[RMDB]
RNA sequence: GGGAACGACUCGAGUAGAGUCGAAAAGUCUGGCUCUUAAGUAUACUGUGUUCCUUGUGGGGUGGCCCAUGCAUCUUGUGCAGCAGCAUUACCUGGACUACUGGCUAAAAAUAUGAAUUCCUGAGCCACAUAAUGAAGUUUUCGAACUUCAUUAUGUAAAAGAAACAACAACAACAAC
Reactivity to DMS in 0.01 (KOAc 150mM, MgCl2 10mM, bicine 150mM(pH8.5), 24C), signal-to-noise 9, nucleotides 027 to 126: g010u000c050u000g020g010c040u010c030u000u010a070a130g010u010a080u000a100c080u000g010u000g010u010u000c020c020u000u000g020u000g010g010g010g020u010g010g000c030c060c040a090u000g010c060a050u000c110u000u010g030u000g010c040a090g000c090a070g010c040a040u000u000a070c050c030u000g010g010a070c060u000a060c060u000g010g010c050u000a020a050a050a070a070u010a070u000g000a080a160u000u000c010c010u000g010a050g010c050c060
Reactivity to 2A3 in 0.01 (KOAc 150mM, MgCl2 10mM, bicine 150mM(pH8.5), 24C), signal-to-noise 7, nucleotides 027 to 126: g050u020c040u030g030g010c010u010c010u140u170a120a040g060u050a090u040a190c060u060g010u020g010u160u020c010c000u040u050g060u090g030g030g000g020u040g060g010c010c020c010a020u060g010c000a030u030c050u150u180g030u040g030c010a040g000c010a000g000c000a010u030u080a080c010c010u020g000g030a020c020u040a030c020u090g030g000c010u050a070a050a010a060a040u190a080u170g100a090a070u050u030c000c010u020g020a020g020c010c010